[RMDB]
RNA sequence: GGGAACGACUCGAGUAGAGUCGAAAAGAUAUGGAGAACUGGAGAACCUGUCGCAGCUAGCAUUCCCAUAUCGGAAACGAUAUGCAUGCUAGCUGCGACAGAAGUUCGUUGAAAGUUCUCCUAAGUCCCUUGCAAUUAAGUUCGCUUAAUUGCAAGGAAAAGAAACAACAACAACAAC
Reactivity to DMS in 0.01 (KOAc 150mM, MgCl2 10mM, bicine 150mM(pH8.5), 24C), signal-to-noise 4, nucleotides 027 to 126: g000a120u000a300u000g000g020a010g010a010a010c000u000g000g010a050g000a010a010c010c010u010g010u000c010g010c010a010g020c020u000a000g020c000a010u000u000c300c300c010a000u000a000u010c000g010g000a110a090a270c010g010a010u000a010u000g050c100a040u000g000c000u000a000g010c000u000g000c000g000a000c000a000g000a030a080g010u000u000c010g000u010u010g000a190a120a040g000u000u000c000u000c000c000u000a010a140g010u010c040
An RNA of 177 nucleotides, treated with DMS and read out base by base. Values cover nucleotides 27 to 126. Conditions: 150 mM KOAc, 10 mM MgCl2 and 150 mM bicine (pH 8.5), 24 C. The DMS profile rests on 5,901 reads.